[RMDB]
Structure probing data (DMS and 2A3) for a 177-nucleotide construct.

RNA sequence: GGGAACGACUCGAGUAGAGUCGAAAAGAACAGGAUAACAGGACGCAAGAUAGGAAGUUCCGAUGAAUCGAGAAGAGCCGUAACUCGAGAACAACGGCAGCGUCCUGAAGAAUUUACGGCUCAAGAAACCGCCUAUAGCUUUCGAGCUAUAGGCGGUAAAAGAAACAACAACAACAAC
Reactivity to DMS in 0.01 (KOAc 150mM, MgCl2 10mM, bicine 150mM(pH8.5), 24C), signal-to-noise 1, nucleotides 027 to 126: g010a010a220c040a160g050g060a100u010a050a080c000a000g000g000a000c000g040c000a200a010g000a120u110a140g000g030a000a170g000u030u000c000c040g000a050u000g010a030a210u000c050g000a000g000a200a130g000a000g000c000c000g000u000a040a050c000u030c000g010a130g000a100a200c010a030a230c000g010g080c250a080g000c000g090u000c000c000u040g000a000a160g010a300a130u000u000u040a030c000g000g010c000u000c080a250a030g000a100a140
Reactivity to 2A3 in 0.01 (KOAc 150mM, MgCl2 10mM, bicine 150mM(pH8.5), 24C), signal-to-noise 1, nucleotides 027 to 126: g140a030a000c030a040g160g030a120u040a220a080c000a000g020g020a000c050g000c040a000a220g070a140u170a230g120g040a190a090g060u130u150c000c000g000a000u000g000a010a140u010c000g000a000g000a060a000g000a000g000c000c000g000u070a000a050c000u030c000g010a040g020a250a060c090a050a010c000g060g000c000a010g000c000g000u000c000c050u010g000a000a000g030a000a000u020u060u020a000c010g000g000c000u000c070a000a010g140a080a120

The RNA was probed in 150 mM KOAc, 10 mM MgCl2 and 150 mM bicine (pH 8.5) at 24 C. For 2A3 the reverse transcriptase was SuperScript II with manganese. The DMS profile rests on 1,007 reads. DMS adducts were read by reverse transcription with MarathonRT.